Conditions: 150 mM KOAc, 10 mM MgCl2 and 150 mM bicine (pH 8.5), 24 C.
Structure probing data (DMS and 2A3) for a 207-nucleotide construct.
Reactivities are rounded to 0.1 and cut off at 0 and 3.
The 2A3 profile rests on 1,442 reads.
It was measured as part of the RMDB library M2RFPK.
[RMDB]
RNA sequence: GGGAACGACUCGAGUAGAGUCGAAAAGUUAGGCGAGGCUCCCAUACAAACACAGGUUGCUGAUCUGACGACGUCGAGAGACGCCCAAGAUUAGGACAGGAUAUAUCGAACCAAGGUAUAUCCCCAUAAAACUCGGAACACUUCGGUGUUCCGAGAAGAUUAGCUGAUACUUCGGUAUCAGCUAAUCAAAAGAAACAACAACAACAAC
Reactivity to DMS in 0.01 (KOAc 150mM, MgCl2 10mM, bicine 150mM(pH8.5), 24C), signal-to-noise 2, nucleotides 027 to 156: g000u000u030a020g020g020c090g030a110g010g030c110u000c020c000c010a230u000a280c110a200a110a100c050a140c010a110g000g020u000u000g030c000u010g030a070u000c050u010g010a170c060g010a060c010g010u020c030g000a300g010a300g000a010c000g050c010c040c040a270a100g000a050u000u000a060g020g000a210c120a040g000g080a040u000a010u000a010u000c010g000a090a270c190c140a050a150g010g010u000a010u000a010u000c000c000c040c060a080u010a010a030a110a280c010u000c000g030g020a040a020c000a010c000u010u000c300g010g070u000g000u030u010c000c000g000a010g010a000a070
Reactivity to 2A3 in 0.01 (KOAc 150mM, MgCl2 10mM, bicine 150mM(pH8.5), 24C), signal-to-noise 2, nucleotides 027 to 156: g040u050u060a060g050g010c080g010a030g030g000c010u050c050c000c000a030u170a080c080a000a210a000c060a020c040a130g080g010u050u120g080c010u000g020a040u000c020u010g010a000c020g000a010c000g030u000c020g010a010g000a000g000a100c010g010c000c010c010a040a000g040a050u060u070a030g030g030a000c050a040g000g000a000u000a000u000a000u020c010g020a110a080c110c070a220a020g000g000u000a000u000a000u020c000c000c000c030a050u240a110a170a040a040c000u000c010g010g000a000a000c000a000c000u050u070c180g090g010u000g000u000u000c000c000g000a000g000a000a000